Source: RMDB library OK2TRN, as collected in RNAgym.
Chemical mapping of a 177-nucleotide RNA with 2A3 and DMS.
The reactions ran in a buffer of 150 mM KOAc, 10 mM MgCl2 and 150 mM bicine (pH 8.5), at 24 C.
RNA sequence: GGGAACGACUCGAGUAGAGUCGAAAAAGAGCACGCAUGAUCCAAUUCCAACUUCUAGUAGAAUGAGUGUUUGCUAUUAGGCAACUGACUCAAUAGUGGUCCAAUCUGCAUGGGGUGGGCAGUUGCACGGUUGGAUGUCAUUCGUGACAUCCAACCGAAAAGAAACAACAACAACAAC
Reactivity to 2A3 in 0.01 (KOAc 150mM, MgCl2 10mM, bicine 150mM(pH8.5), 24C), signal-to-noise 1, nucleotides 027 to 126: a000g030a030g000c020a000c030g030c000a050u110g010a060u010c030c010a000a080u090u000c010c000a080a060c040u110u010c050u150a070g010u010a010g070a110a010u070g030a000g020u050g020u000u040u190g000c000u040a120u190u090a100g050g000c000a020a000c040u060g190a070c000u030c060a070a080u070a050g080u040g090g020u000c020c000a020a080u020c030u050g060c060a070u120g000g000g000g090u000g000g000g000c020a050g020u070u020g000c020a030
Reactivity to DMS in 0.01 (KOAc 150mM, MgCl2 10mM, bicine 150mM(pH8.5), 24C), signal-to-noise 2, nucleotides 027 to 126: a040g000a010g000c030a010c080g010c060a040u000g040a100u010c050c090a060a120u000u010c030c010a050a050c140u000u000c090u010a110g000u000a080g020a090a100u000g010a100g050u010g000u000u010u010g020c000u000a070u000u030a060g030g010c010a000a010c050u000g000a120c060u020c000a050a060u030a120g020u000g020g000u000c130c100a040a050u000c100u010g000c050a130u000g010g020g000g030u000g000g000g000c070a020g000u000u010g000c040a140